[RMDB]
RNA sequence: GGGAACGACUCGAGUAGAGUCGAAAAACUAUACCCCACUAUAGAACAGAAGGUUUUCAGAUGGAGUUCACAAGAGCAACUGCAGCAUCUGUGGUUUGUGAAAUAGUUCAAUCAAAACACAGGGACAGACUCAUAAUCGGUUCGCCGAUUAUGAGUCAAAAGAAACAACAACAACAAC
Reactivity to 2A3 in 0.01 (KOAc 150mM, MgCl2 10mM, bicine 150mM(pH8.5), 24C), signal-to-noise 4, nucleotides 027 to 126: a020c050u080a070u240a220c000c030c050c010a080c010u210a130u070a150g080a160a010c050a000g130a120a110g090g020u060u050u090u040c030a040g040a050u100g020g060a050g050u040u100c010a000c020a120a020g060a000g080c040a080a040c050u070g000c030a030g050c000a140u130c030u010g010u040g040g050u000u040u050g030u020g080a070a110a160u180a090g170u070u060c010a030a090u060c010a030a060a020a010c040a000c000a020g000g000g070a000c010a070
Reactivity to DMS in 0.01 (KOAc 150mM, MgCl2 10mM, bicine 150mM(pH8.5), 24C), signal-to-noise 1, nucleotides 027 to 126: a060c140u010a080u020a080c000c000c000c000a090c180u020a040u040a080g000a150a150c160a050g000a060a090g010g030u000u000u010u040c100a030g020a130u010g000g000a080g010u040u000c030a010c080a100a070g000a000g060c150a220a010c060u000g000c050a000g000c040a040u000c060u000g020u000g010g000u000u000u000g000u050g020a050a060a170u010a050g080u000u000c060a050a030u000c000a000a000a020a050c010a010c000a050g000g010g040a140c080a090